[RMDB]
RNA sequence: GGGAACGACUCGAGUAGAGUCGAAAACGACCGCUGGUACGCCAGCGGUCGAAACGUGACGAAAAGUCACGAAAAUGUCGGAGAGAAAAGCACCAUGGACUCAACCGACAAAAACCAAAGGUGCGAAGAUUACCUCAUAUUUCGAUAUGAGGUAAUCAAAAGAAACAACAACAACAAC
Reactivity to DMS in 0.01 (KOAc 150mM, MgCl2 10mM, bicine 150mM(pH8.5), 24C), signal-to-noise 3, nucleotides 027 to 126: c030g010a020c000c010g030c000u010g000g020u010a070c270g020c010c000a000g040c010g010g020u000c000g010a010a030a090c010g010u000g020a000c000g010a110a050a100a080g010u000c030a010c000g000a040a070a100a090u030g000u000c010g000g000a300g010a020g000a180a130a080a060g000c000a050c030c020a130u020g000g000a190c010u000c020a080a100c000c010g000a010c000a010a020a070a090a110c050c020a060a160a090g020g010u000g000c020g020a080a140
Reactivity to 2A3 in 0.01 (KOAc 150mM, MgCl2 10mM, bicine 150mM(pH8.5), 24C), signal-to-noise 8, nucleotides 027 to 126: c020g000a000c010c000g010c020u010g020g010u080a070c280g080c060c010a000g000c000g000g010u000c000g000a000a000a000c000g000u010g000a000c010g070a070a190a170a110g000u000c000a000c010g010a070a050a010a030u120g000u000c010g010g000a030g000a000g010a050a110a040a050g010c010a010c020c000a080u170g070g020a080c010u010c050a140a240c070c000g010a010c040a030a150a010a010a010c060c040a070a030a020g000g000u010g000c030g030a070a000